[RMDB]
RNA sequence: GGGAACGACUCGAGUAGAGUCGAAAAUCGCCUUCGGGCGAAAAAAAGAUAUGGAUGCAGAAGAUAAGUGGUCGGAAACGACCACUAUCGUAUCUGGUCCUAAGUCAAAAACGCGGUUCGCCGCGAAGAUACUCGAAUACUUCGGUAUUCGAGUAUCAAAAGAAACAACAACAACAAC
Reactivity to DMS in 0.01 (KOAc 150mM, MgCl2 10mM, bicine 150mM(pH8.5), 24C), signal-to-noise 3, nucleotides 027 to 126: u000c010g020c010c010u000u000c160g030g020g020c010g000a010a010a040a080a040a090a090g010a010u010a300u000g010g000a010u000g010c010a000g010a030a100g000a010u010a030a050g020u000g000g010u000c000g000g000a080a080a210c000g000a020c000c000a000c000u000a010u000c000g000u000a050u000c000u000g000g010u000c000c000u000a040a080g000u030c010a030a070a030a070a110c050g010c000g000g000u010u010c210g020c010c010g020c010g000a040a050
Reactivity to 2A3 in 0.01 (KOAc 150mM, MgCl2 10mM, bicine 150mM(pH8.5), 24C), signal-to-noise 3, nucleotides 027 to 126: u010c000g030c000c010u070u050c300g060g000g010c070g080a110a020a000a020a000a000a010g040a020u060a020u110g020g010a020u120g300c000a010g000a040a010g000a020u100a300a160g000u000g010g000u010c010g040g010a040a050a110c000g000a000c010c000a000c000u000a000u000c000g030u020a120u010c000u000g000g040u000c000c000u010a150a000g030u020c010a000a030a020a080a110c010g020c020g000g120u040u050c260g030c100c000g000c010g010a010a010